[RMDB]
RNA sequence: GGGAACGACUCGAGUAGAGUCGAAAAGACUUGGCUAGUGGUCGCGAUGUCGACGUGGACCUCAGAUUGGAUCCGCCGAAUGGACGACCGCGACACUCUUGGUGUGGUCGAUGGCGUGGUGCGCGACGUAGACAGCCUCCUUCGGGAGGCUGUCUACAAAAGAAACAACAACAACAAC
Reactivity to 2A3 in 0.01 (KOAc 150mM, MgCl2 10mM, bicine 150mM(pH8.5), 24C), signal-to-noise 1, nucleotides 027 to 126: g020a040c140u020u220g020g000c000u030a040g090u020g020g000u010c000g050c000g050a090u180g070u130c000g000a040c100g000u000g030g000a000c000c070u150c100a120g000a270u110u090g000g000a100u050c000c010g000c000c040g040a140a070u020g200g000a000c000g000a020c000c000g040c000g010a000c000a070c000u160c040u040u230g020g070u140g000u000g030g020u020c070g000a040u050g030g000c020g010u040g000g030u090g000c020g020c090g100a000c120